Description: Chemical mapping of a 207-nucleotide RNA with 2A3. The 2A3 profile rests on 1,094 reads. Conditions: 150 mM KOAc, 10 mM MgCl2 and 150 mM bicine (pH 8.5), 24 C.
RNA sequence: GGGAACGACUCGAGUAGAGUCGAAAAUUAUGAAAGGAAAAGUGGCCUGAACUGAGGGACUUUGGGAGAGUGAUGGUUGGCAAGAGGAGGUCACCUCAAAUGUGCUGCUUCUCUAGCAAGGGUGAACACUUUGCAAGUAUUUGGUCAUAAAUCUCCAACCAUGCAGUGAUUUCGAUCACUGCAUGGUAAAAGAAACAACAACAACAAC
Reactivity to 2A3 in 0.01 (KOAc 150mM, MgCl2 10mM, bicine 150mM(pH8.5), 24C), signal-to-noise 2, nucleotides 027 to 156: u120u030a060u130g050a050a050a000g030g020a030a050a000a000g020u040g000g020c020c050u060g040a120a080c080u030g020a000g010g000g020a000c050u040u090u060g030g020g000a060g000a020g050u050g060a030u030g000g080u130u040g000g060c060a030a010g000a030g070g020a000g000g040u020c010a100c060c020u070c000a030a060a060u220g010u120g010c000u010g040c000u030u040c030u000c010u040a030g020c060a010a020g030g000g000u040g100a150a010c030a000c040u000u040u050g000c010a000a040g020u000a070u140u050u060g010g010u020c010a000u070a180a080a060u070c030u010c020c010a040